[RMDB]
RNA sequence: GGGAACGACUCGAGUAGAGUCGAAAAGGGGUCCCAUGGUCCCCUCACCUGGAAGCUUGGAUUUAUAUGGCUGAAGCCUCCACGGCCAUAUUGUCAGCUUCCCUGUGAGGUCCAUGGGACGGAGGCACCCAAAACGACAGCGUUCGCGCUGUCGUAAGUCCUGGAAAAUGUUCGCAUUUUCCAGGACAAAAGAAACAACAACAACAAC
Reactivity to 2A3 in 0.01 (KOAc 150mM, MgCl2 10mM, bicine 150mM(pH8.5), 24C), signal-to-noise 1, nucleotides 027 to 156: g000g010g060g010u000c000c000c000a000u010g000g000u120c090c080c000c010u000c000a000c010c000u010g000g010a010a000g020c080u240u220g200g000a030u070u300u060a020u110a010u000g000g010c010u000g030a150a000g010c000c000u000c000c000a030c030g000g000c000c000a000u010a000u000u010g010u030c050a060g010c030u010u000c020c000c000u010g010u000g000a010g000g020u040c000c000a000u010g010g000g000a010c000g000g000a000g000g010c010a030c010c000c070a010a110a010a010c000g020a000c000a000g040c000g030u040u130c120g030c000g080c110u000g000u000c000g070u090a000a020
An RNA of 207 nucleotides, treated with 2A3 and read out base by base. The RNA was probed in 150 mM KOAc, 10 mM MgCl2 and 150 mM bicine (pH 8.5) at 24 C. The data come from the RNA Mapping Database (RMDB), library RNAMAK.